[RMDB]
RNA sequence: GGGAACGACUCGAGUAGAGUCGAAAAAACAUAGUCUACGAGCCCACUACUCCCAUUUCGUCAGCGCUGAUUGCAGUUGCAAAUUGGCUUGCCCCCACUAAUGCUUAUAUGCGCACUACACAUACUGAAAGCGACAAGUUCGCUUGUCGCAAAAGAAACAACAACAACAAC
Reactivity to DMS in 0.01 (KOAc 150mM, MgCl2 10mM, bicine 150mM(pH8.5), 24C), signal-to-noise 3, nucleotides 027 to 129: a050a040c060a120u020a040g000u020c040u040a080c080g030a100g020c010c030c100a060c000u030a040c000u020c000c020c020a170u050u050u040c100g030u040c050a070g020c000g000c170u060g020a100u030u020g010c020a000g010u000u000g000c030a020a030a090u020u050g080g030c060u000u000g020c000c000c010c000c000a080c120u050a000a000u060g030c000u010u010a040u010a050u090g030c050g000c000a000c010u000a080c000a000c040a080u020a110c060u000g000a080a020a040
Reactivity to 2A3 in 0.01 (KOAc 150mM, MgCl2 10mM, bicine 150mM(pH8.5), 24C), signal-to-noise 5, nucleotides 027 to 129: a030a000c110a070u130a040g040u020c030u080a050c020g030a020g010c000c000c000a030c000u020a020c010u030c000c000c020a020u060u060u080c070g080u030c010a020g000c010g000c060u060g100a140u100u090g010c020a000g000u040u010g010c000a000a000a110u080u030g030g020c020u020u110g010c000c000c030c000c000a030c060u070a060a060u060g040c030u110u030a100u040a000u260g030c000g000c010a000c000u030a010c000a020c010a030u130a070c000u060g020a080a010a010